RNA sequence: GGGAACGACUCGAGUAGAGUCGAAAAGAUAUGGAGCCUAUGGAGGAACUACCCUUGAUCUGUUCGGAAACGAACAGCGUAAGGGCUGGAAGUAGGCUCCUAAGUCAAAGGCAGCUUCGGCUGCCAACUAAGUUUGAUAGUUCGCUAUCAAACUUAGAAAAGAAACAACAACAACAAC
Reactivity to 2A3 in 0.01 (KOAc 150mM, MgCl2 10mM, bicine 150mM(pH8.5), 24C), signal-to-noise 4, nucleotides 027 to 126: g030a010u070a030u120g000g000a000g000c000c000u020a020u050g030g060a110g070g060a180a090c100u170a050c120c000c000u020u020g030a100u130c000u000g010u000u010c000g020g020a040a020a030c000g000a000a010c000a000g000c010g040u150a000a020g040g000g040c050u040g030g020a040a030g000u010a000g000g010c000u010c000c000u000a010a010g000u000c020a050a030a080g000g000c010a000g010c010u080u100c190g170g000c000u000g000c000c000a000a000
Reactivity to DMS in 0.01 (KOAc 150mM, MgCl2 10mM, bicine 150mM(pH8.5), 24C), signal-to-noise 6, nucleotides 027 to 126: g000a040u000a300u000g000g010a020g010c000c010u000a010u000g010g010a300g010g000a130a110c060u000a230c020c000c010u000u000g000a070u010c000u000g010u000u000c000g000g020a100a100a140c010g000a010a010c000a000g000c230g000u000a010a000g000g000g000c050u000g000g010a290a180g010u000a000g010g000c000u000c000c000u000a010a050g000u000c030a070a080a150g000g010c000a010g010c010u000u020c200g020g010c000u000g010c000c000a010a040